[RMDB]
RNA sequence: GGGAACGACUCGAGUAGAGUCGAAAAAUCUUAGUGUAGUAUAAAGAGACUAAUAGUCUCUAGGGUCUGCGAUAUGUGACACCAGACCCACCCGUACAUACUACGCUAAGUGUACGGGCCUUCAAUCAGGUGUCACGUAUCGCUGAUUGAAGGCCAACACUAGCUUCAUCUUCGGAUGAAGCUAGUGAAAAGAAACAACAACAACAAC
Reactivity to DMS in 0.01 (KOAc 150mM, MgCl2 10mM, bicine 150mM(pH8.5), 24C), signal-to-noise 1, nucleotides 027 to 156: a060u010c020u000u000a000g030u020g000u010a030g000u000a080u000a090a110a050g010a050g000a040c000u020a230a210u010a150g010u000c000u000c000u000a080g030g020g040u000c020u000g010c080g000a070u000a080u000g020u010g000a030c000a000c060c020a080g010a050c010c000c070a040c070c070c040g030u000a060c120a090u000a070c060u000a010c060g000c040u000a010a050g030u000g000u030a060c060g000g000g000c020c020u020u020c050a030a070u000c000a100g010g000u000g000u000c020a010c160g030u000a020u010c050g020c000u000g000a010u010u000g010a040a020g040g010c030c030a050a160
Reactivity to 2A3 in 0.01 (KOAc 150mM, MgCl2 10mM, bicine 150mM(pH8.5), 24C), signal-to-noise 3, nucleotides 027 to 156: a000u010c020u030u010a030g000u010g000u020a030g010u020a010u030a120a290a010g010a000g000a000c000u060a090a250u110a280g000u000c000u020c000u000a070g020g000g020u010c010u010g010c020g000a010u030a010u140g060u030g000a000c010a010c030c000a010g020a010c020c010c000a020c010c030c040g010u010a040c030a080u030a000c010u010a010c020g000c020u010a000a050g000u010g000u030a060c040g030g010g000c000c030u050u040c000a030a060u040c020a020g020g000u000g000u010c030a030c100g010u080a020u050c000g000c050u000g010a010u000u050g040a010a010g000g000c010c010a010a000
This 207-nucleotide RNA was probed chemically with DMS and 2A3. For DMS, 2,375 sequencing reads were counted. Source: RMDB library OK3TST, as collected in RNAgym. For 2A3 the reverse transcriptase was SuperScript II with manganese.